[RMDB]
RNA sequence: GGGAACGACUCGAGUAGAGUCGAAAAGGUGGCUUGUGGAAGCGCCGUCGCUCAACGGAUAAAAGGUACCCCGGGGAUAACAGGCUGAUCUUCCCCAAGAGUCCAUAUCGACGGGAUGGUUUGGCACGAAGUUCUGGUAAUUCGUUACCAGAACUUCAAAAGAAACAACAACAACAAC
Reactivity to DMS in 0.01 (KOAc 150mM, MgCl2 10mM, bicine 150mM(pH8.5), 24C), signal-to-noise 4, nucleotides 027 to 126: g020g010u010g010g010c030u000u010g020u000g000g010a080a070g010c060g010c030c020g010u010c060g010c110u000c080a170a080c060g010g000a080u000a030a080a070a070g010g010u010a100c130c060c020c040g010g010g000g010a110u010a070a110c110a050g010g010c030u000g010a040u000c090u000u000c020c010c000c080a070a220g000a100g010u000c070c070a050u010a070u000c020g010a180c260g010g000g000a040u000g000g010u000u000u010g020g010c100a110c210
Reactivity to 2A3 in 0.01 (KOAc 150mM, MgCl2 10mM, bicine 150mM(pH8.5), 24C), signal-to-noise 2, nucleotides 027 to 126: g060g010u060g050g000c060u120u120g070u100g120g130a050a070g000c000g020c030c010g020u020c030g040c010u040c010a030a080c020g000g050a040u070a160a120a030a070g090g060u070a070c000c030c030c020g030g030g000g000a020u060a160a040c010a050g020g030c000u030g030a050u010c030u030u070c010c000c000c010a000a000g020a010g050u030c050c020a050u050a020u060c030g010a020c050g000g020g030a010u030g000g080u050u020u090g010g020c020a020c070